[RMDB]
RNA sequence: GGGAACGACUCGAGUAGAGUCGAAAAAGUCAUUACGAUGACAAAACCAGCGCAGACUGGCGCGCCCCAGGGAUCUCUGGGUGAGUAUCUCUUUGAGCGCCUCACUCUCAAGCACAACUAGGAGGAAAUGUCAGGUCGUAUUCGUACGACCUGACAUAAAAGAAACAACAACAACAAC
Reactivity to DMS in 0.01 (KOAc 150mM, MgCl2 10mM, bicine 150mM(pH8.5), 24C), signal-to-noise 1, nucleotides 027 to 126: a070g010u000c000a000u000u000a180c300g070a070u000g010a020c000a080a020a230a100c000c000a020g000c100g050c130a040g000a040c050u020g000g000c130g000c170g040c050c000c010c140a110g000g000g000a050u000c060u000c000u000g040g000g040u010g020a050g000u000a000u010c070u000c000u010u000u060g060a200g000c110g030c170c000u010c120a000c010u000c000u000c120a050a070g010c100a110c090a100a220c140u000a130g050g000a120g000g000a090a140
Reactivity to 2A3 in 0.01 (KOAc 150mM, MgCl2 10mM, bicine 150mM(pH8.5), 24C), signal-to-noise 3, nucleotides 027 to 126: a000g000u000c010a000u030u060a080c250g160a020u040g000a000c020a000a130a000a000c020c010a040g000c080g000c080a030g050a270c040u100g030g030c010g000c000g040c020c000c000c010a010g010g050g030a140u040c050u000c010u270g270g020g000u130g010a020g000u100a080u010c050u030c000u030u060u080g060a040g000c030g000c010c010u000c000a030c000u010c000u000c040a080a030g080c030a040c000a140a190c070u120a030g050g000a000g000g080a080a180
Source information: This 177-nucleotide RNA was probed chemically with DMS and 2A3. Values cover nucleotides 27 to 126. Conditions: 150 mM KOAc, 10 mM MgCl2 and 150 mM bicine (pH 8.5), 24 C.